[RMDB]
RNA sequence: GGGAACGACUCGAGUAGAGUCGAAAAUCAGCAUCCUGCAGGGCCAUGCUGCCAUCAUCUACAGUGCUGCGGCGUCAUCAGACGCCCUCAUUGCAUCUGCGUCAGAGGACAACACUGCGCGGCUGUGCGGAAACAUAGAAUUCGUUCUAUGUUUCCGAAAAGAAACAACAACAACAAC
Reactivity to 2A3 in 0.01 (KOAc 150mM, MgCl2 10mM, bicine 150mM(pH8.5), 24C), signal-to-noise 9, nucleotides 027 to 126: u100c010a010g030c010a050u110c010c020u110g050c100a140g020g040g000c040c030a040u080g010c030u050g030c020c000a070u110c020a020u010c030u090a080c030a050g020u020g060c070u030g040c080g030g000c000g010u010c010a200u080c060a110g010a020c000g000c000c000c000u010c000a060u030u150g010c010a040u010c010u050g010c010g070u100c030a010g030a030g060g060a030c020a090a010c040a040c020u020g000c020g000c010g030g000c010u040g030u070g090
Reactivity to DMS in 0.01 (KOAc 150mM, MgCl2 10mM, bicine 150mM(pH8.5), 24C), signal-to-noise 9, nucleotides 027 to 126: u010c050a060g020c050a080u000c060c020u000g010c070a060g010g010g010c110c110a070u000g010c050u000g010c030c030a090u000c100a080u010c060u000a060c050a030g010u000g000c150u000g020c300g020g010c010g010u000c010a150u010c210a130g010a030c020g010c010c010c030u010c050a050u010u000g000c020a030u010c050u000g000c050g000u000c050a040g010a070g000g000a080c080a040a060c060a060c030u000g000c020g010c050g010g000c040u000g010u000g000